[RMDB]
RNA sequence: GGGAACGACUCGAGUAGAGUCGAAAAUUGGAUGCCAGCACGGUGCCGUCGUCGUCGAGAACUUCCGACUCGAUUCUGAUUCCGCCGUGGGGAACAUCGGUCCCAUUUUCGACGUCGACCUGGAGCCAGGGAUCCGCUACAUUGUCGUCGGAGGCGCAGUCCGUAUCCUGUUCGCAGGAUACGGACUAAAAGAAACAACAACAACAAC
Reactivity to 2A3 in 0.01 (KOAc 150mM, MgCl2 10mM, bicine 150mM(pH8.5), 24C), signal-to-noise 2, nucleotides 027 to 156: u050u040g030g010a030u070g250c010c030a070g030c070a030c090g040g000u080g000c070c000g000u030c000g000u030c000g000u010c000g000a000g000a050a040c090u190u080c070c020g060a070c040u120c190g080a080u110u120c020u180g110a300u070u030c030c000g100c020c090g140u250g010g030g050g000a000a060c020a020u030c020g000g050u020c030c000c000a020u010u020u000u020c000g010a020c000g000u020c010g010a060c020c020u040g000g030a030g040c080c010a050g020g000g000a000u010c000c000g020c020u090a070c040a180u110u230g020u010c010g030u020c040g020g120a120g020g030c100g000c030

Record summary
An RNA of 207 nucleotides, treated with 2A3 and read out base by base. The RNA was probed in 150 mM KOAc, 10 mM MgCl2 and 150 mM bicine (pH 8.5) at 24 C.